[RMDB]
RNA sequence: GGGAACGACUCGAGUAGAGUCGAAAACACAGUGAAACCCCGUCUCUACUGAAAGUACAAAAAAUUAGCCAGGCAUGGUGGCAGGCGCCUGUAGUAGUCCCAGCUACUCGCAAGGCUGAGGCAGGAGAAGGGCGUGAACCUAGGAGGCGGAGGUUGAUAUAUGAUAGCUCUUCGGAGCUAUCAUAUAAAAAGAAACAACAACAACAAC
Reactivity to 2A3 in 0.01 (KOAc 150mM, MgCl2 10mM, bicine 150mM(pH8.5), 24C), signal-to-noise 1, nucleotides 027 to 156: c070a010c010a020g120u080g170a110a010a000c000c000c000c000g010u020c000u040c000u030a100c050u030g070a160a110a080g040u090a130c120a040a230a010a050a040a100u150u120a030g000c000c000a020g030g210c100a100u100g050g010u020g020g000c030a010g000g180c020g010c020c060u210g000u100a040g030u020a020g090u130c010c000c000a010g000c000u000a030c040u100c050g130c080a090a000g010g000c000u030g000a050g050g010c010a020g110g060a070g000a070a050g030g000g000c030g030u040g010a030a000c000c010u040a090g030g030a000g000g020c040g050g020a130g050g010u000u010g000a000
Reactivity to DMS in 0.01 (KOAc 150mM, MgCl2 10mM, bicine 150mM(pH8.5), 24C), signal-to-noise 1, nucleotides 027 to 156: c040a040c060a040g060u000g000a080a050a060c010c000c010c000g000u010c000u010c010u030a120c040u040g010a090a080a120g030u020a280c040a010a050a050a110a110a160u000u010a050g030c040c030a060g010g000c050a150u030g040g030u000g020g040c070a090g020g040c110g040c000c020u010g030u020a140g000u020a030g030u000c000c000c000a290g010c000u000a080c080u000c180g000c130a090a130g030g020c000u010g000a020g020g030c000a070g000g010a170g000a070a130g030g020g010c000g050u000g010a110a000c010c010u020a130g030g010a040g050g020c040g020g000a030g010g010u000u010g000a140

Conditions: 150 mM KOAc, 10 mM MgCl2 and 150 mM bicine (pH 8.5), 24 C. Chemical mapping of a 207-nucleotide RNA with 2A3 and DMS.